Source: RMDB library TTRDEL, as collected in RNAgym.
An RNA of 177 nucleotides, treated with 2A3 and DMS and read out base by base.
[RMDB]
RNA sequence: GGGAACGACUCGAGUAGAGUCGAAAAGAUAUGGAUUCCUUUGAUCGUAAGCUGCAGUCGGAAACGACUGGCAGUAUCGGGAGGAAUCCUAAGUCAAAAGACGGAACUUGUUCGCAAGUUCCGUCAACAACUUUAGGCAGUUCGCUGCCUAAAGUUGAAAAGAAACAACAACAACAAC
Reactivity to 2A3 in 0.01 (KOAc 150mM, MgCl2 10mM, bicine 150mM(pH8.5), 24C), signal-to-noise 2, nucleotides 027 to 126: g010a000u000a000u040g010g000a000u010u030c040c010u090u040u180g300a300u300c060g130u260a220a090g000c000u000g000c010a000g010u000c010g010g020a010a010a010c000g000a000c010u030g050g000c000a000g010u040a070u300c000g020g050g020a010g010g000a000a000u000c010c000u000a020a000g010u000c020a030a020a020a190g000a010c000g010g000a010a000c000u010u010g060u190u150c210g020c200a020a010g010u000u050c020c000g000u000c000a000a000
Reactivity to DMS in 0.01 (KOAc 150mM, MgCl2 10mM, bicine 150mM(pH8.5), 24C), signal-to-noise 2, nucleotides 027 to 126: g000a000u010a100u020g000g000a010u000u010c000c010u000u000u010g010a140u030c050g020u000a130a130g000c000u000g000c000a030g010u000c000g000g010a020a010a070c010g010a010c000u010g000g000c020a010g020u000a040u010c030g020g000g000a000g000g010a020a000u000c000c000u000a000a030g000u010c020a120a140a130a090g000a020c000g000g000a020a000c000u000u000g010u000u010c150g030c000a000a020g010u000u000c010c010g050u000c010a000a030
2A3 adducts were read by reverse transcription with SuperScript II with manganese.